[RMDB]
RNA sequence: GGGAACGACUCGAGUAGAGUCGAAAAUUGCACACUCACUGGUUGGGAGGUGCGAAACUCCUUCAGUCGUCACUACUUCCCGGAGCUGUGGGGAUUCGACUCUAAUUUGCUGGCCGAAAGCAACAUAAUUUAAUCAUCGUUUCGACGAUGAUUAAAUAAAAGAAACAACAACAACAAC
Reactivity to DMS in 0.01 (KOAc 150mM, MgCl2 10mM, bicine 150mM(pH8.5), 24C), signal-to-noise 8, nucleotides 027 to 126: u000u010g020c030a020c030a100c010u000c010a080c070u010g020g020u010u010g010g000g030a110g010g020u000g010c030g000a050a110a090c100u000c060c070u000u010c090a050g010u000c060g010u010c070a060c070u000a100c080u000u000c010c010c020g000g000a060g010c100u000g030u000g010g000g010g000a190u000u000c010g000a020c010u000c010u010a030a090u000u000u010g010c090u000g000g020c030c020g000a060a080a090g000c050a040a060c150a090u010a070
Reactivity to 2A3 in 0.01 (KOAc 150mM, MgCl2 10mM, bicine 150mM(pH8.5), 24C), signal-to-noise 4, nucleotides 027 to 126: u030u070g020c000a010c000a020c000u020c000a110c060u120g120g140u180u060g050g060g020a120g010g000u040g000c020g000a060a030a020c060u090c030c000u080u060c010a050g030u030c030g090u070c040a010c100u130a060c020u090u020c030c020c000g020g020a040g000c070u040g000u050g030g060g020g020a020u030u000c010g010a000c010u000c000u020a100a170u080u090u090g020c020u020g050g000c010c020g070a070a050a000g040c020a010a040c010a100u270a180